[RMDB]
RNA sequence: GGGAACGACUCGAGUAGAGUCGAAAAGAAGGACGUGAUAAGCUGCGAUAAGUUACGGUAAGCUGCUAUAUGCUUUGACCCGUAAAUUUCCGAAUGGGGCAACCCGGCUAUGUGAAGCAUAGUCACCGCUGGAUAGUUGAUUCGUCAACUAUCCAGCAAAAGAAACAACAACAACAAC
Reactivity to 2A3 in 0.01 (KOAc 150mM, MgCl2 10mM, bicine 150mM(pH8.5), 24C), signal-to-noise 6, nucleotides 027 to 126: g090a030a050g010g000a000c000g000u010g020a050u030a130a040g000c000u000g000c000g040a070u020a050a020g030u030u020a020c010g010g030u020a030a010g000c000u000g010c030u060a040u020a020u300g020c000u120u120u070g040a050c000c000c000g000u020a030a020a040u030u040u000c010c010g020a060a090u080g010g000g020g010c020a030a090c020c010c000g000g000c000u010a010u000g040u040g250a120a010g060c000a000u010a000g000u020c020a020c080c090
Reactivity to DMS in 0.01 (KOAc 150mM, MgCl2 10mM, bicine 150mM(pH8.5), 24C), signal-to-noise 4, nucleotides 027 to 126: g000a160a150g000g010a020c040g000u020g010a080u000a090a110g000c000u020g000c030g020a030u010a020a050g020u000u010a070c050g000g000u000a030a030g010c000u010g010c060u100a080u010a040u040g000c020u000u000u020g000a100c300c000c020g010u000a000a040a050u000u030u000c020c010g000a100a090u040g000g010g020g010c130a070a070c060c040c040g010g000c000u010a020u000g000u020g010a150a100g010c020a020u000a010g000u000c000a060c150c100